[RMDB]
RNA sequence: GGGAACGACUCGAGUAGAGUCGAAAAACAGGCGGUACGCCGCCUGAAUUUUCCUGCCCUCGAGGAGCUCACAGUCUAGUACGUCUCAUCCCCUACUAGACUGAAGCUCCUUGAGGACAGGGAUCAAUGAACACUUCAGGUUCGCCUGAAGUGUUCAAAAAGAAACAACAACAACAAC
Reactivity to 2A3 in 0.01 (KOAc 150mM, MgCl2 10mM, bicine 150mM(pH8.5), 24C), signal-to-noise 4, nucleotides 027 to 126: a000c010a010g000g000c010g030g010u070a060c250g060c040c000g000c000c010u000g010a010a010u040u030u020u010c010c000u000g000c010c000c000u000c010g020a000g000g000a000g000c000u000c010a270c000a010g000u000c000u010a010g000u010a010c120g120u040c080u040c180a130u100c000c000c000c000u000a000c000u000a000g000a000c000u000g000a000a000g000c010u000c000c000u000u000g000a000g000g000a000c000a000g020g000g000a020u080c020a030a190
Reactivity to DMS in 0.01 (KOAc 150mM, MgCl2 10mM, bicine 150mM(pH8.5), 24C), signal-to-noise 2, nucleotides 027 to 126: a240c040a000g000g000c010g020g020u020a060c180g040c000c000g050c000c000u010g000a010a020u030u000u000u020c000c010u000g010c050c000c000u000c020g000a000g000g020a000g000c030u040c080a140c020a010g000u000c000u000a000g010u000a010c260g020u020c080u020c260a050u010c070c050c020c050u000a000c000u000a000g000a000c010u000g000a300a030g010c000u000c000c000u000u000g000a000g000g000a010c000a000g010g010g030a040u000c170a130a090

This 177-nucleotide RNA was probed chemically with 2A3 and DMS. It was measured as part of the RMDB library RFM100. Values are in units of 0.01, from 0 to 300, in steps of 10. For DMS the reverse transcriptase was MarathonRT. The RNA was probed in 150 mM KOAc, 10 mM MgCl2 and 150 mM bicine (pH 8.5) at 24 C.